[RMDB]
RNA sequence: GGGAACGACUCGAGUAGAGUCGAAAAGAUAUGGACCAAGAGGCUUGGACCGUACGGUGUCGGAAACGACAUUACGCUAGCCUACUGGUCCUAAGUCAAAACAAUGUCUUGUUCGCAAGACAUUGAACGUAGAUACGAUGUUCGCAUCGUAUCUACGAAAAGAAACAACAACAACAAC
Reactivity to DMS in 0.01 (KOAc 150mM, MgCl2 10mM, bicine 150mM(pH8.5), 24C), signal-to-noise 5, nucleotides 027 to 126: g010a030u010a300u010g000g010a040c000c010a010a060g000a080g010g000c000u010u010g070g010a110c300c030g000u020a040c300g000g010u000g020u000c000g000g000a090a080a130c020g010a010c000a030u000u000a010c010g020c040u000a040g020c010c010u010a040c030u000g010g000u000c000c000u000a020a080g020u000c040a110a090a090a300c020a000a000u000g000u000c000u000u000g000u000u010c290g010c010a010a000g000a020c000a000u000u000g010a080a170
Reactivity to 2A3 in 0.01 (KOAc 150mM, MgCl2 10mM, bicine 150mM(pH8.5), 24C), signal-to-noise 5, nucleotides 027 to 126: g030a000u060a020u140g010g010a000c000c010a030a050g020a010g060g020c090u270u300g150g090a300c130c010g010u050a070c240g100g060u030g020u020c010g010g010a040a070a010c000g010a000c000a010u020u050a010c020g030c120u090a020g000c000c000u040a140c010u040g020g000u000c000c010u000a010a000g010u010c020a020a000a080a180c020a000a020u000g000u000c000u020u030g040u100u100c300g000c150a010a000g010a010c000a010u010u010g010a080a020
Chemical mapping of a 177-nucleotide RNA with DMS and 2A3. The data come from the RNA Mapping Database (RMDB), library TTRDES. Values cover nucleotides 27 to 126. Conditions: 150 mM KOAc, 10 mM MgCl2 and 150 mM bicine (pH 8.5), 24 C.